About this RNA
This 177-nucleotide RNA was probed chemically with DMS and 2A3. For DMS the reverse transcriptase was MarathonRT. It was measured as part of the RMDB library OK2TRN. Values cover nucleotides 27 to 126. The RNA was probed in 150 mM KOAc, 10 mM MgCl2 and 150 mM bicine (pH 8.5) at 24 C.
[RMDB]
RNA sequence: GGGAACGACUCGAGUAGAGUCGAAAAGCCACUUACGGAGACUCCGUCUGACGUACAGUCUCACUCGCAUGACUAGUCAAAGUCAUGACUGUGAGCGAGUACGACUGAUGGUCAGUUCGAGUCUGGAGGUAGUAGCUCCUUUCGAGGAGCUACUACCAAAAGAAACAACAACAACAAC
Reactivity to DMS in 0.01 (KOAc 150mM, MgCl2 10mM, bicine 150mM(pH8.5), 24C), signal-to-noise 2, nucleotides 027 to 126: g020c000c000a160c170u010u000a090c120g000g040a140g020a070c010u000c030c090g040u000c000u000g010a030c000g020u010a020c020a040g000u000c000u000c130a050c000u000c120g000c000a050u010g000a040c030u010a040g020u000c160a000a070a110g000u020c110a100u000g000a000c050u000g000u010g000a060g010c010g000a050g000u000a050c130g000a040c010u000g020a020u020g020g000u010c050a070g000u000u000c090g010a140g010u000c030u000g020g000a270
Reactivity to 2A3 in 0.01 (KOAc 150mM, MgCl2 10mM, bicine 150mM(pH8.5), 24C), signal-to-noise 2, nucleotides 027 to 126: g040c000c040a070c120u170u190a070c060g190g060a040g010a060c010u020c020c050g040u020c020u010g000a020c010g040u090a010c020a020g040u000c000u020c010a020c000u010c020g010c020a100u120g050a100c010u070a020g070u120c050a090a130a060g170u090c050a100u060g030a030c020u020g000u000g020a010g020c010g000a010g010u000a000c040g010a030c000u020g000a020u120g000g000u000c000a000g000u040u060c010g000a020g020u000c010u000g060g030a110